[RMDB]
RNA sequence: GGGAACGACUCGAGUAGAGUCGAAAACAAUCUAAAAAUCCCCAUUGCAGUCAUGGGCAAACCAGAUGUGCUUCUUGAAGUCUGACAGUUUUCCUGACAUAUCAUGUGAGUGAAUCAUAUGGGUAACAUUUUUCAUAAUAAACUCCAAUUUGAAAUCCUUGUUUCCUGAGUUCGCUCAGGAAACAAGAAAAGAAACAACAACAACAAC
Reactivity to 2A3 in 0.01 (KOAc 150mM, MgCl2 10mM, bicine 150mM(pH8.5), 24C), signal-to-noise 1, nucleotides 027 to 156: c030a040a040u170c130u300a140a020a080a080a170u170c030c000c000c020a070u090u190g130c100a080g000u000c000a030u030g000g020g030c050a030a030a000c020c040a020g000a000u180g150u120g130c000u190u040c070u070u210g120a020a000g080u000c020u000g020a050c030a040g080u060u000u000u020c000c000u000g020a000c000a130u170a050u070c100a000u120g070u020g050a000g000u070g030a150a040u050c050a000u030a120u070g030g010g000u020a030a000c000a050u070u190u110u170u190c050a050u120a210a020u100a210a300a000c030u100c070c020a120a070u110u060u040g170a130a220a030u070c000